The record gives the reactivity of an RNA of 177 nucleotides to DMS and 2A3. The RNA was probed in 150 mM KOAc, 10 mM MgCl2 and 150 mM bicine (pH 8.5) at 24 C.
RNA sequence: GGGAACGACUCGAGUAGAGUCGAAAAUACAUCACGAUGGCGUUCGGUGGUAUCGGGUGACCUAGGCGUAGGCGUAGCGUUACCGUCUCGCGGAACUGGUGCCUUGGCUCCAGCUUGACCGCAGCCAUGCCAGUACAUGCUUCGGCAUGUACUGGCAAAAAGAAACAACAACAACAAC
Reactivity to DMS in 0.01 (KOAc 150mM, MgCl2 10mM, bicine 150mM(pH8.5), 24C), signal-to-noise 2, nucleotides 027 to 126: u010a080c090a080u010c080a050c110g010a100u000g020g020c040g000u000u010c080g060g040u000g000g000u010a030u000c050g010g000g000u000g000a030c000c010u010a050g010g010c030g030u010a120g020g030c010g010u010a070g010c150g030u000u010a040c060c010g000u000c020u000c110g050c000g010g000a080a120c020u000g000g000u010g000c010c070u000u010g030g020c030u000c010c010a000g010c060u020u010g000a120c000c030g010c030a150g000c060c020a070
Reactivity to 2A3 in 0.01 (KOAc 150mM, MgCl2 10mM, bicine 150mM(pH8.5), 24C), signal-to-noise 1, nucleotides 027 to 126: u090a030c020a020u060c010a000c140g050a080u070g060g000c070g130u170u040c110g030g070u080g030g050u060a050u160c120g030g000g030u050g060a090c010c000u020a020g150g070c020g090u120a080g090g130c070g020u000a000g050c090g120u030u090a060c010c000g050u020c000u000c040g010c000g010g000a000a000c020u010g010g010u030g000c000c040u020u160g030g000c050u000c000c000a000g020c080u070u110g100a080c000c000g000c000a000g000c020c020a070
Overview: Reactivities are given for positions 27 through 126. For 2A3, 1,265 sequencing reads were counted. The data come from the RNA Mapping Database (RMDB), library OK2TRN. 2A3 is a SHAPE reagent: it acylates the 2'-hydroxyl of flexible nucleotides of all four kinds.